[RMDB]
RNA sequence: GGGAACGACUCGAGUAGAGUCGAAAAUUGCUGAAAUGCAAGUUUGUAUUAGGAAAUAAAGCAUACAACUUCAUAUAUGUUACAGUGAUCCAUGGCACUCUACAUGACACAUUUCUGACUUUAACUCCGCAUGGCUAGUAUUCGUACUAGCCAUGCGAAAAGAAACAACAACAACAAC
Reactivity to DMS in 0.01 (KOAc 150mM, MgCl2 10mM, bicine 150mM(pH8.5), 24C), signal-to-noise 1, nucleotides 027 to 126: u000u010g010c000u000g010a160a100a030u010g000c060a010a060g000u000u000u000g000u000a040u000u010a220g020g000a110a070a140u020a140a070a160g000c090a040u000a030c040a050a060c050u010u000c050a010u000a120u010a110u030g020u000u000a150c090a090g010u010g020a090u020c060c030a030u000g070g020c070a030c010u000c050u000a040c060a050u000g010a090c090a020c120a140u020u000u000c000u000g000a020c060u010u000u010a060a130c090u010c030
Reactivity to 2A3 in 0.01 (KOAc 150mM, MgCl2 10mM, bicine 150mM(pH8.5), 24C), signal-to-noise 1, nucleotides 027 to 126: u040u010g000c010u040g020a060a000a050u060g000c020a020a030g000u070u180u100g010u050a060u060u130a090g030g180a040a120a180u180a120a230a040g170c020a010u010a030c010a050a020c000u010u070c040a080u060a030u050a030u220g090u170u100a070c010a020g020u030g020a020u020c050c010a060u040g050g000c010a020c030u000c010u020a020c000a070u100g000a000c010a000c000a110u030u030u070c030u090g110a130c030u080u090u090a040a000c020u040c000